[RMDB]
RNA sequence: GGGAACGACUCGAGUAGAGUCGAAAACUUGCGACUUACACGUAGGGCGAGGGGUGGGCGAAAGUUGCCAUGAGACCGUAACUUUCGUAGUCAUCGAUAAAGGGGCAGGUCUCGCUCUUUUGUCAUUUUAAUCUCUAACAGUUCGCUGUUAGAGAAAGACGAACCCUGCGUUCGCGCAGGGUUCGUCAAAAGAAACAACAACAACAAC
Reactivity to 2A3 in 0.01 (KOAc 150mM, MgCl2 10mM, bicine 150mM(pH8.5), 24C), signal-to-noise 1, nucleotides 027 to 156: c040u020u030g030c020g050a030c080u070u140a030c140a000c150g130u070a070g000g030g000c110g130a170g000g000g000g010u300g030g000g010c000g010a000a000a000g010u010u020g030c030c140a150u080g050a010g000a050c000c020g000u000a010a000c000u000u020u000c010g000u010a050g070u050c040a130u080c040g050a010u050a070a020a000g000g000g010g000c000a010g000g060u000c000u010c020g000c000u080c000u020u050u000u060g050u020c000a010u000u030u070u260a130a130u060c000u050c000u010a010a010c000a010g040u120u080c170g040c130u000g000u010u000a000g000a000g000a010a000a010
Chemical mapping of a 207-nucleotide RNA with 2A3. Conditions: 150 mM KOAc, 10 mM MgCl2 and 150 mM bicine (pH 8.5), 24 C.